An RNA of 177 nucleotides, treated with 2A3 and DMS and read out base by base. 2A3 adducts were read by reverse transcription with SuperScript II with manganese. The data come from the RNA Mapping Database (RMDB), library OK1LIB. The reactions ran in a buffer of 150 mM KOAc, 10 mM MgCl2 and 150 mM bicine (pH 8.5), at 24 C.
RNA sequence: GGGAACGACUCGAGUAGAGUCGAAAAAUGCCGCAUUCAGUGACGGUUACUCUAGUGGGCGACUGUCCAUCUAGCGUUGACAUCUACAUACUAUAUAGUAAUACCAAUACUCAAGACUACGAAACGGACCUAUCCUGGAGUUCGCUCCAGGAUAGGUAAAAGAAACAACAACAACAAC
Reactivity to 2A3 in 0.01 (KOAc 150mM, MgCl2 10mM, bicine 150mM(pH8.5), 24C), signal-to-noise 5, nucleotides 027 to 126: a010u120g010c000c030g040c020a080u100u110c040a050g120u020g120a090c000g000g000u030u080a040c000u010c010u040a030g040u050g020g020g020c020g200a180c130u220g030u040c020c000a060u030c000u000a000g000c000g040u030u040g030a010c000a110u000c030u040a040c020a120u080a080c030u070a070u060a030u070a240g070u070a080a080u020a090c020c030a060a050u040a050c020u040c060a050a050g090a090c050u070a020c110g070a080a100a020c050g030g010
Reactivity to DMS in 0.01 (KOAc 150mM, MgCl2 10mM, bicine 150mM(pH8.5), 24C), signal-to-noise 2, nucleotides 027 to 126: a080u050g030c000c000g050c020a120u050u010c240a070g010u010g030a140c040g000g000u000u050a020c040u000c010u010a100g070u000g000g000g000c000g020a080c090u060g010u000c030c010a000u020c020u090a040g000c090g000u000u020g040a050c070a090u020c000u020a110c070a120u000a040c040u040a030u060a070u030a060g010u000a070a030u000a210c090c120a060a100u020a060c170u040c100a010a080g000a130c100u000a040c140g020a070a090a030c190g020g000